[RMDB]
RNA sequence: GGGAACGACUCGAGUAGAGUCGAAAACGAUCAGCCGGUCGAGUUCGUCCGGAUCGCCGCCGCCAUGCAUCCAUCCAUCGGCGCGCGCCGCCCGUCGCAGUGCUGCAUCGGCGUGGCCACCGACCAGCCCCAUAAGGGAUUUCGAUCCCUUAUGGGGAAAAGAAACAACAACAACAAC
Reactivity to DMS in 0.01 (KOAc 150mM, MgCl2 10mM, bicine 150mM(pH8.5), 24C), signal-to-noise 3, nucleotides 027 to 126: c070g000a080u020c080a140g010c060c050g010g000u000c030g000a120g000u010u010c050g000u000c010c000g000g010a050u000c080g000c030c030g010c090c020g030c080c030a040u000g010c040a080u000c070c040a100u040c090c030a080u000c040g000g010c090g000c170g000c050g000c050c040g020c020c030c050g020u000c060g010c190a110g000u010g030c090u000g000c050a110u010c060g020g000c070g040u000g000g010c010c060a080c050c010g000a090c080c070a120g000
Reactivity to 2A3 in 0.01 (KOAc 150mM, MgCl2 10mM, bicine 150mM(pH8.5), 24C), signal-to-noise 3, nucleotides 027 to 126: c010g010a060u100c050a000g110c020c050g000g030u070c020g010a090g250u170u250c020g040u040c030c030g000g020a060u090c050g030c040c000g030c010c040g000c020c000a020u040g020c020a030u020c040c000a030u080c040c000a070u100c060g010g000c020g000c020g000c030g030c030c040g010c000c010c000g030u060c030g000c060a020g070u030g180c050u030g020c020a030u050c080g000g000c020g010u050g040g000c000c010a020c030c000g000a040c010c000a020g070

Annotation: Chemical mapping of a 177-nucleotide RNA with DMS and 2A3. DMS adducts were read by reverse transcription with MarathonRT. The data come from the RNA Mapping Database (RMDB), library OK2TST. High 2A3 reactivity points to a flexible backbone, as in loops and unpaired stretches.